Source information
Structure probing data (2A3) for a 177-nucleotide construct. Conditions: 150 mM KOAc, 10 mM MgCl2 and 150 mM bicine (pH 8.5), 24 C. Values cover nucleotides 27 to 126. Source: RMDB library OK1LIB, as collected in RNAgym. The 2A3 profile rests on 474 reads.
RNA sequence: GGGAACGACUCGAGUAGAGUCGAAAACAACUUUAACACACGUAUAUUCCAUCCUGGGUGCUUAUGGAGGGCCCACGUGCUUGUAUCCGACAGCCACGUAUUUUUUGAUGGGCACUUCUAAAGGAUGGGUGAGGUAUGGCUUCGGCCAUACCUCACCAAAAGAAACAACAACAACAAC
Reactivity to 2A3 in 0.01 (KOAc 150mM, MgCl2 10mM, bicine 150mM(pH8.5), 24C), signal-to-noise 1, nucleotides 027 to 126: c070a030a100c020u230u270u090a150a060c090a000c000a000c030g030u000a040u030a060u180u060c020c000a000u020c000c000u000g000g000g150u000g070c000u230u030a010u120g030g000a000g000g000g000c000c000c000a060c000g020u020g070c020u000u070g000u090a130u100c020c030g080a000c000a040g020c050c000a000c000g100u000a180u090u160u060u030u040u040g260a210u050g010g000g000c000a010c000u110u000c000u060a000a050a050g000g000a020u020g000